[RMDB]
RNA sequence: GGGAACGACUCGAGUAGAGUCGAAAAUGCGUUGAAUAUUGCUACUACAUUCUUGAAAAAGUGAUGUAGAUUUAUAGCCCAUAACUUUUUUGAAUUACAUCGACGAUACGGCGUCGAAAGAAAAAUACUCACAUGAAUAGUUCGCUAUUCAUGUGAGAAAAGAAACAACAACAACAAC
Reactivity to 2A3 in 0.01 (KOAc 150mM, MgCl2 10mM, bicine 150mM(pH8.5), 24C), signal-to-noise 2, nucleotides 027 to 126: u030g000c020g080u120u160g160a210a070u250a060u150u150g010c000u010a060c000u000a000c000a000u030u000c000u030u080g040a030a020a000a020a000g000u020g010a000u000g000u010a010g010a020u000u090u050a150u020a010g040c010c040c040a030u020a030a020c010u070u070u060u000u050u110g090a150a090u170u100a120c050a120u010c000g000a000c000g050a030u060a200c080g080g030c020g090u000c010g010a000a110a010g040a010a060a000a020a000u050a030
Reactivity to DMS in 0.01 (KOAc 150mM, MgCl2 10mM, bicine 150mM(pH8.5), 24C), signal-to-noise 2, nucleotides 027 to 126: u010g010c100g020u020u000g010a170a110u000a060u000u000g010c010u010a040c030u000a000c000a010u000u000c010u000u010g000a030a010a010a010a020g010u000g000a020u000g020u000a010g000a140u010u000u010a130u010a060g000c020c050c030a160u020a020a010c020u000u000u000u000u010u010g010a160a100u010u010a100c180a050u000c030g000a040c020g010a160u010a110c230g020g030c010g020u010c020g000a030a080a020g040a010a080a030a080a100u010a100
Annotation: Structure probing data (2A3 and DMS) for a 177-nucleotide construct. Values cover nucleotides 27 to 126. DMS adducts were read by reverse transcription with MarathonRT.